[RMDB]
RNA sequence: GGGAACGACUCGAGUAGAGUCGAAAAUAAUAUUUACCUGUACUGAGAAUUCAGGAUUGGGGUUACCAAGUACAGUACCACAAGGAUGAAGACUUUCAUCCGCCGUCUGAACUAAAGAGGGUGGCCAAUACUACCCGAGGUUCGCCUCGGGUAGUAUAAAAGAAACAACAACAACAAC
Reactivity to 2A3 in 0.01 (KOAc 150mM, MgCl2 10mM, bicine 150mM(pH8.5), 24C), signal-to-noise 3, nucleotides 027 to 126: u060a000a020u040a010u110u130u130a120c010c000u020g040u060a070c020u080g060a080g060a300a240u190u090c030a070g080g080a150u180u300g020g000g000g000u000u040a120c030c030a120a000g000u010a080c090a010g020u080a040c010c020a060c070a140a000g090g020a000u060g010a010a000g250a250c090u120u130u000c010a000u000c020c000g030c010c010g080u000c010u020g030a100a110c000u040a250a090a000g140a050g010g030g030u040g000g090c000c020a060
Reactivity to DMS in 0.01 (KOAc 150mM, MgCl2 10mM, bicine 150mM(pH8.5), 24C), signal-to-noise 3, nucleotides 027 to 126: u010a080a160u030a300u000u000u010a030c080c000u000g040u020a030c010u020g020a160g000a080a100u030u020c000a000g000g000a140u040u050g010g010g000g000u000u020a090c010c070a030a020g020u030a040c040a040g010u000a090c010c070a110c170a130a090g000g000a020u000g000a160a030g050a160c230u030u000u000c000a000u000c000c000g020c160c100g000u000c000u000g000a100a040c150u020a060a100a040g010a200g000g050g000u000g000g000c060c120a100
This 177-nucleotide RNA was probed chemically with 2A3 and DMS. Reactivities are rounded to 0.1 and cut off at 0 and 3. Conditions: 150 mM KOAc, 10 mM MgCl2 and 150 mM bicine (pH 8.5), 24 C. For 2A3, 1,196 sequencing reads were counted. Reactivities are given for positions 27 through 126. It was measured as part of the RMDB library OK1LIB. The DMS profile rests on 2,659 reads.